[RMDB]
The record gives the reactivity of an RNA of 177 nucleotides to DMS and 2A3. Values cover nucleotides 27 to 126.
RNA sequence: GGGAACGACUCGAGUAGAGUCGAAAAGCCGGCUAAAGCGACUGGCAAGUUUAACGUUGACAACACCAAUAUGGAUGCAAAUGUAGCCCCGCCACCGACGCCAGCAACGCCGAAUGAACUAAUAAUCGAGUAAGACAACGUUCGCGUUGUCUUACUCAAAAGAAACAACAACAACAAC
Reactivity to DMS in 0.01 (KOAc 150mM, MgCl2 10mM, bicine 150mM(pH8.5), 24C), signal-to-noise 2, nucleotides 027 to 126: g000c030c000g010g000c050u030a060a110a180g020c100g000a020c000u000g020g060c050a140a070g000u010u000u000a070a150c060g040u010u060g010a100c090a100a170c110a020c060c020a050a130u000a050u050g020g000a030u000g040c080a000a100a030u000g010u060a010g000c000c020c000c020g020c090c020a020c040c030g000a030c090g000c030c000a040g000c030a040a070c090g000c030c000g000a010a120u050g030a020a130c050u000a080a030u010a020a110u110c120
Reactivity to 2A3 in 0.01 (KOAc 150mM, MgCl2 10mM, bicine 150mM(pH8.5), 24C), signal-to-noise 3, nucleotides 027 to 126: g020c050c000g030g020c010u070a070a010a000g050c020g120a200c020u020g040g040c050a070a040g030u030u020u120a130a020c100g020u010u020g070a030c020a080a100c020a020c100c020a030a070u100a070u180g080g050a030u070g020c030a040a030a130u180g010u040a040g000c000c000c000c020g020c010c000a030c010c020g040a050c020g030c040c020a030g000c010a020a070c050g030c030c000g040a020a090u130g010a010a040c100u080a060a080u100a130a060u300c110